[RMDB]
RNA sequence: GGGAACGACUCGAGUAGAGUCGAAAAAAAGAAGGAUAGAGGGGAGAGAAAGAGAUAAUCUAUCCGCAAAUCUAAUUUCUACUGACAAACAGCCACCAACCCACCUGAAUGACCAACAACCAUCAACCUCACCUCUCAGGUAGUGCCACCUCUGCUACCUACGAUAAUGAUUCGUCAUUAUCGUAGGAAAAGAAACAACAACAACAAC
Reactivity to 2A3 in 0.01 (KOAc 150mM, MgCl2 10mM, bicine 150mM(pH8.5), 24C), signal-to-noise 4, nucleotides 027 to 156: a010a000a000g060a040a040g010g000a000u020a030g020a010g000g040g030g000a030g010a010g060a050a140a010g050a000g010a030u110a110a060u040c010u020a010u000c030c010g000c030a080a120a020u030c020u100a070a090u010u080u070c030u040a090c050u070g080a020c030a040a130a020c010a060g020c020c020a020c010c010a040a060c010c010c010a050c010c020u010g040a080a100u080g040a060c030c010a030a040c030a040a030c070c020a030u090c020a020a050c010c010u030c020a040c010c010u030c000u020c050a010g010g010u030a010g020u040g060c010c000a010c000c010u050c020u030g050c030u050a080
Reactivity to DMS in 0.01 (KOAc 150mM, MgCl2 10mM, bicine 150mM(pH8.5), 24C), signal-to-noise 2, nucleotides 027 to 156: a050a030a080g010a160a140g020g000a050u000a050g030a080g040g000g020g010a130g010a120g010a120a050a090g010a110g000a180u000a050a120u000c020u010a060u000c020c030g000c070a100a050a050u000c030u020a050a090u010u010u010c010u000a110c050u000g000a040c040a050a070a090c050a080g000c020c030a020c040c050a070a060c000c010c030a090c050c030u030g010a060a080u000g000a100c020c020a030a030c050a010a060c040c020a040u000c040a050a060c020c010u000c020a080c040c040u010c050u010c020a010g000g020u010a040g000u000g000c000c010a050c050c000u000c010u000g010c080u000a140